Structure probing data (2A3) for a 177-nucleotide construct. 2A3 is a SHAPE reagent: it acylates the 2'-hydroxyl of flexible nucleotides of all four kinds. Values cover nucleotides 27 to 126. The RNA was probed in 150 mM KOAc, 10 mM MgCl2 and 150 mM bicine (pH 8.5) at 24 C. For 2A3 the reverse transcriptase was SuperScript II with manganese.
RNA sequence: GGGAACGACUCGAGUAGAGUCGAAAAGAGGCAACGAGUGCGCCUCAAGGUAGGUACUCCGCAAUCUACCAGUACUCGAUUUGAUCUCGGAAUGCCAUUUUGAGAUCUGGUAUUCCAAGCGGAGAAAGGGAACGAAGAUCUUCGGAUCUUCGUUCCCAAAAGAAACAACAACAACAAC
Reactivity to 2A3 in 0.01 (KOAc 150mM, MgCl2 10mM, bicine 150mM(pH8.5), 24C), signal-to-noise 1, nucleotides 027 to 126: g020a000g000g000c010a050a160c150g030a000g000u000g000c080g030c030c000u040c080a010a000g000g070u000a000g040g010u050a300c000u000c000c000g000c000a000a000u000c000u000a000c000c030a000g000u010a030c060u010c010g110a180u200u110u160g190a290u030c050u030c040g010g000a000a000u060g000c000c000a010u020u080u130u150g280a190g070a120u000c030u020g010g030u000a060u030u010c020c000a010a000g000c000g000g000a000g070a040a000a020